The record gives the reactivity of an RNA of 177 nucleotides to 2A3 and DMS. The RNA was probed in 150 mM KOAc, 10 mM MgCl2 and 150 mM bicine (pH 8.5) at 24 C. As a SHAPE reagent, 2A3 marks flexible, mostly unpaired nucleotides at the ribose 2'-OH. High DMS reactivity at an A or C suggests that its Watson-Crick edge is free. The 2A3 profile rests on 4,435 reads. For DMS the reverse transcriptase was MarathonRT. Reactivities are given for positions 27 through 126.
RNA sequence: GGGAACGACUCGAGUAGAGUCGAAAAGCUCGUAUCUCCGAGAGGAGACGAGAAGGAGGUGGAUCUCCCUUUGCCAUCCGAGGGAACUACGUUCUCCUUACGGAUGCCCAGGUCGGACCGCGAGGAGCUAAGCAUUACUCUUCGGAGUAAUGCUUAGAAAAGAAACAACAACAACAAC
Reactivity to 2A3 in 0.01 (KOAc 150mM, MgCl2 10mM, bicine 150mM(pH8.5), 24C), signal-to-noise 3, nucleotides 027 to 126: g030c020u000c000g040u100a160u060c030u000c000c000g020a030g010a040g070g000a000g010a010c010g000a010g030a030a040g110g060a040g000g060u130g040g110a210u030c040u040c010c020c000u060u060u100g030c020c000a010u020c010c000g000a010g010g030g000a030a030c030u110a080c290g070u060u010c090u040c030c000u070u100a070c010g030g000a020u040g020c000c010c020a020g020g060u080c060g020g050a040c020c010g010c010g040a090g030g020a030g070
Reactivity to DMS in 0.01 (KOAc 150mM, MgCl2 10mM, bicine 150mM(pH8.5), 24C), signal-to-noise 4, nucleotides 027 to 126: g020c010u000c000g010u000a120u000c000u000c000c000g020a270g000a230g000g010a010g010a020c000g000a010g010a100a050g010g000a070g010g020u000g010g000a130u000c040u000c040c000c030u000u000u020g020c150c010a010u000c000c010g020a090g010g000g000a030a020c050u010a130c200g000u000u010c020u000c000c050u000u000a120c030g010g000a040u000g000c020c020c040a090g010g000u000c080g000g010a150c040c030g010c060g010a070g000g010a090g000